[RMDB]
RNA sequence: GGGAACGACUCGAGUAGAGUCGAAAACCGGGUUUCGACCCGGAUAAACCGUAGGCCAGUCUCCCCACCUGAUCGAACUACGUCGCUGGCUUCGAAAGAGGCCAGAUGACGCGAUCAGAGGACUGGCCUAAACGGGAGCUCUGAGGUUCGCCUCAAAAAUAGGAUACAACUUCGGUUGUAUCCUAUUAAAAGAAACAACAACAACAAC
Reactivity to DMS in 0.01 (KOAc 150mM, MgCl2 10mM, bicine 150mM(pH8.5), 24C), signal-to-noise 2, nucleotides 027 to 156: c000c020g010g000g030u000u010u000c180g020a090c000c010c000g020g020a020u000a000a100a170c000c020g050u000a040g010g010c000c010a010g020u000c060u000c300c090c010c040a300c300c010u000g000a020u000c010g020a130a300c010u010a080c000g010u010c020g010c010u000g000g010c000u000u010c000g000a180a130a250g000a060g000g030c010c010a040g000a020u000g000a010c020g020c000g000a020u000c010a050g010a250g030g010a070c010u010g000g040c000c000u000a010a020a040c010g020g000g010a090g000c080u000c060u000g010a050g000g030u020u000c100g050c030c000u000c010a030a060a100
Reactivity to 2A3 in 0.01 (KOAc 150mM, MgCl2 10mM, bicine 150mM(pH8.5), 24C), signal-to-noise 1, nucleotides 027 to 156: c000c020g000g000g000u070u110u100c220g110a090c000c000c000g000g010a030u050a020a140a010c040c000g000u010a020g000g000c000c000a020g000u010c050u100c030c010c000c010a030c020c000u000g040a000u000c000g020a080a110c100u110a050c300g030u010c010g000c010u010g000g010c000u000u000c000g010a020a020a010g010a000g000g000c000c000a000g010a160u080g010a010c000g030c000g000a000u000c000a000g000a010g010g020a000c010u000g010g080c000c000u000a000a000a000c010g000g010g010a010g000c010u010c050u130g030a020g000g010u060u040c140g090c030c000u060c040a050a040a050
Source information:
Source: RMDB library RNAMAK, as collected in RNAgym. This 207-nucleotide RNA was probed chemically with DMS and 2A3. The RNA was probed in 150 mM KOAc, 10 mM MgCl2 and 150 mM bicine (pH 8.5) at 24 C.